[RMDB]
RNA sequence: GGGAACGACUCGAGUAGAGUCGAAAACCUGGUUUAGGGUUCCAGGCUAGACCUAUCUAUCGGUCGAGAUGCGAGCGCUUAAGCUCAAAUUGAGUGGCUGAGUUAGUGGUGAACGUAUCCCUAUGUUAAAACGGUAGCUGCUUCGGCAGCUACCGAACUCCCCUUUCAUGUUCGCAUGAAAGGGGAGAAAAGAAACAACAACAACAAC
Reactivity to DMS in 0.01 (KOAc 150mM, MgCl2 10mM, bicine 150mM(pH8.5), 24C), signal-to-noise 1, nucleotides 027 to 156: c000c000u000g050g000u000u000u000a070g020g050g000u000u010c010c010a040g010g070c010u000a120g000a100c000c030u000a120u000c090u000a060u010c030g030g080u000c000g030a300g000a020u000g120c300g000a030g030c060g060c300u010u050a110a200g090c010u000c000a020a300a060u010u000g000a150g040u010g000g030c080u000g000a120g030u000u000a070g010u000g100g040u010g000a130a090c070g020u000a140u000c020c000c000u000a070u030g050u000u000a010a120a060a170c050g000g000u000a000g000c000u010g010c000u000u000c300g090g040c020a000g010c010u000a000c020c000g000a030a050
Reactivity to 2A3 in 0.01 (KOAc 150mM, MgCl2 10mM, bicine 150mM(pH8.5), 24C), signal-to-noise 2, nucleotides 027 to 156: c000c000u000g000g030u000u040u070a080g020g020g000u090u020c010c000a020g010g010c020u040a050g020a060c020c010u040a090u150c030u060a140u070c010g020g010u000c010g000a010g000a040u040g010c010g010a020g000c080g000c170u300u300a160a050g020c000u020c000a030a040a040u040u030g020a040g050u150g060g000c020u020g010a020g110u120u050a060g020u090g120g080u030g080a110a040c030g060u050a070u090c020c000c020u020a080u130g080u040u180a020a120a000a020c000g000g030u000a000g000c010u020g020c010u040u050c160g040g000c000a000g010c000u000a000c000c000g000a000a000

Structure probing data (DMS and 2A3) for a 207-nucleotide construct. Values cover nucleotides 27 to 156. The RNA was probed in 150 mM KOAc, 10 mM MgCl2 and 150 mM bicine (pH 8.5) at 24 C. For DMS the reverse transcriptase was MarathonRT. It was measured as part of the RMDB library M2RFPK. For DMS, 1,264 sequencing reads were counted. For 2A3, 765 sequencing reads were counted.